[RMDB]
RNA sequence: GGGAACGACUCGAGUAGAGUCGAAAAAUGGCCUGCUGUGCCUGCUGUAAGGAAAGGAGGCGCUCUCCUUCACGAAAGUGGUCAAAGGCAUCCUCUGCCCGCAGGAAGGACGCAAAUGCGAGCGCAACACCGUGAUAGGCUUCGGCCUAUCACGGUGAAAAGAAACAACAACAACAAC
Reactivity to DMS in 0.01 (KOAc 150mM, MgCl2 10mM, bicine 150mM(pH8.5), 24C), signal-to-noise 2, nucleotides 027 to 126: a070u040g020g000c070c000u000g010c000u000g020u030g000c030c000u000g010c080u000g030u020a000a240g010g000a000a070a120g000g000a020g000g010c180g000c060u070c000u000c030c030u020u000c090a110c090g030a080a120a200g010u030g010g020u010c110a050a040a060g000g000c110a070u000c010c000u000c080u000g000c050c030c000g000c050a030g040g030a140a130g020g000a080c010g020c080a040a040a110u020g000c060g000a040g020c020g020c000a070a210
Reactivity to 2A3 in 0.01 (KOAc 150mM, MgCl2 10mM, bicine 150mM(pH8.5), 24C), signal-to-noise 2, nucleotides 027 to 126: a020u110g190g050c010c010u020g010c020u080g040u000g000c010c000u010g040c000u050g030u280a150a100g030g060a090a080a000g130g060a070g090g070c050g100c070u080c010u000c000c000u040u000c060a080c200g100a140a040a000g040u080g000g070u070c060a090a010a060g020g000c000a040u080c010c040u050c050u070g000c000c000c000g070c020a010g000g100a080a040g060g040a040c020g000c150a130a170a050u200g050c100g020a000g000c050g000c000a060a010